This 177-nucleotide RNA was probed chemically with DMS and 2A3. Source: RMDB library OK2TRN, as collected in RNAgym. For 2A3 the reverse transcriptase was SuperScript II with manganese. DMS (dimethyl sulfate) methylates the pairing face of unpaired adenines and cytosines. The RNA was probed in 150 mM KOAc, 10 mM MgCl2 and 150 mM bicine (pH 8.5) at 24 C. For 2A3, 2,913 sequencing reads were counted. For DMS the reverse transcriptase was MarathonRT.
RNA sequence: GGGAACGACUCGAGUAGAGUCGAAAAAUAUAGGUGGCUGAAAUGCACCAGGAUGACGGUGAUAAGGAAUAUCGGCAGGCUUUAGCUACAACGGAACAUAGACUCUCAAAGCUUGAAAUGCUCAUAGCUGUUCUAAGUGUUUCGACACUUAGAACAGAAAAGAAACAACAACAACAAC
Reactivity to DMS in 0.01 (KOAc 150mM, MgCl2 10mM, bicine 150mM(pH8.5), 24C), signal-to-noise 4, nucleotides 027 to 126: a090u010a090u000a070g010g020u000g020g020c020u000g030a050a040a090u010g010c030a050c030c020a090g000g000a090u010g010a120c050g010g010u010g020a080u010a070a120g010g010a060a070u000a080u000c070g030g020c080a030g020g000c050u000u000u010a080g000c060u000a030c100a070a120c110g000g000a050a040c080a080u000a070g000a050c080u000c030u000c090a060a070a050g000c030u010u000g000a070a100a110u000g010c050u000c070a100u000a110g000
Reactivity to 2A3 in 0.01 (KOAc 150mM, MgCl2 10mM, bicine 150mM(pH8.5), 24C), signal-to-noise 2, nucleotides 027 to 126: a000u150a020u030a050g000g050u020g060g020c020u050g030a030a080a120u110g000c000a010c000c000a010g060g030a040u060g010a010c030g010g000u060g030a050u020a080a040g100g030a120a030u070a030u130c020g020g000c010a010g000g040c020u000u070u060a030g000c000u040a030c010a080a040c070g060g000a000a010c020a020u070a030g040a090c000u010c010u000c020a080a050a010g010c000u030u020g020a060a110a050u090g050c010u000c030a060u150a090g000